[RMDB]
RNA sequence: GGGAACGACUCGAGUAGAGUCGAAAAAUCCUCAGGUUCAGAAGCGUGAUGAUUGGGUGUUCAUGCUCCAUGCAUGACAUGUGCCUCCUUUGAACCUUGUUACGACCUUGGCACAUUACCCAUCUGAAAAAGACGUUCGCGUUCGCGCGAACGUCAACGGAUAAUUGUACUUCGGUACAAUUAUCCGAAAAGAAACAACAACAACAAC
Reactivity to 2A3 in 0.01 (KOAc 150mM, MgCl2 10mM, bicine 150mM(pH8.5), 24C), signal-to-noise 2, nucleotides 027 to 156: a000u010c000c000u020c010a000g020g000u010u000c020a010g030a170a040g070c110g140u120g110a100u060g010a020u180u240g010g010g000u080g040u080u040c000a000u000g000c020u040c210c080a150u300g010c000a000u000g010a010c010a010u010g000u010g010c020c000u030c000c000u010u000u020g000a000a000c000c000u010u100g070u060u100a140c090g030a120c020c070u060u080g000g000c010a010c000a010u020u180a030c000c010c010a010u010c030u060g080a130a090a010a020a030g010a010c000g000u000u000c000g010c000g010u020u060c190g010c000g000c010g100a000a000c000g000u000c000a000a000
Reactivity to DMS in 0.01 (KOAc 150mM, MgCl2 10mM, bicine 150mM(pH8.5), 24C), signal-to-noise 2, nucleotides 027 to 156: a080u000c000c030u000c050a010g010g010u000u000c020a060g000a070a100g020c160g020u000g020a130u000g020a070u020u000g020g030g020u010g000u000u000c000a000u000g010c010u010c220c190a110u000g030c010a010u010g040a030c300a210u000g000u000g020c020c020u000c090c010u000u020u000g010a030a030c020c000u000u010g000u000u000a140c250g000a140c150c070u000u010g020g010c010a020c010a060u000u000a080c000c000c010a030u000c000u010g010a070a070a120a140a150g010a050c010g000u000u000c000g030c000g030u000u000c300g010c030g070c000g060a020a020c000g000u000c000a010a060

Annotation: Structure probing data (2A3 and DMS) for a 207-nucleotide construct. It was measured as part of the RMDB library M2RFOK. 2A3 adducts were read by reverse transcription with SuperScript II with manganese. The DMS profile rests on 3,271 reads. Values are in units of 0.01, from 0 to 300, in steps of 10.